[RMDB]
RNA sequence: GGGAACGACUCGAGUAGAGUCGAAAAUACGGAAUGGAUCAAUCAGUAUUGGAUCAAGCGACUGCACUUGGUCAUCCACCGACUAUUGCUGACACUCCAGGGGCUGCGGUAAGUGAUGCGGAUGUGGUCUAUACCGAUGUCUGGAUUUCGAUGGGGCUCGUAAACCUAGUUUCGACUAGGUUUACGAAAAAGAAACAACAACAACAAC
Reactivity to DMS in 0.01 (KOAc 150mM, MgCl2 10mM, bicine 150mM(pH8.5), 24C), signal-to-noise 2, nucleotides 027 to 156: u000a080c040g050g020a100a150u010g000g010a080u010c060a140a100u000c040a090g030u000a170u000u010g000g020a030u010c020a040a070g030c010g020a150c150u000g010c070a010c000u000u000g010g040u000c020a120u000c020c030a100c030c020g010a110c070u010a090u000u010g000c050u000g010a150c050a090c050u010c040c020a110g040g000g030g020c060u000g020c080g050g020u000a040a140g040u010g020a110u000g000c050g020g010a070u000g020u000g040g000u000c020u000a120u020a150c020c030g000a070u000g000u000c020u000g000g000a110u000u000u000c070g010a070u010g020g000g040g040c120
Reactivity to 2A3 in 0.01 (KOAc 150mM, MgCl2 10mM, bicine 150mM(pH8.5), 24C), signal-to-noise 4, nucleotides 027 to 156: u130a020c050g040g050a050a100u100g030g040a030u060c040a040a030u050c030a080g060u100a120u140u200g040g000a030u070c050a040a010g050c020g180a150c070u080g010c050a010c080u020u020g030g030u030c000a010u040c040c010a010c010c000g040a040c070u110a080u160u180g010c040u030g020a050c030a020c070u030c040c030a050g050g000g000g000c030u030g030c050g040g000u050a060a030g040u020g140a030u090g040c030g040g030a050u050g070u070g060g020u000c010u020a060u050a080c000c070g010a040u060g060u070c020u010g030g030a060u060u090u010c010g010a020u070g000g000g060g000c060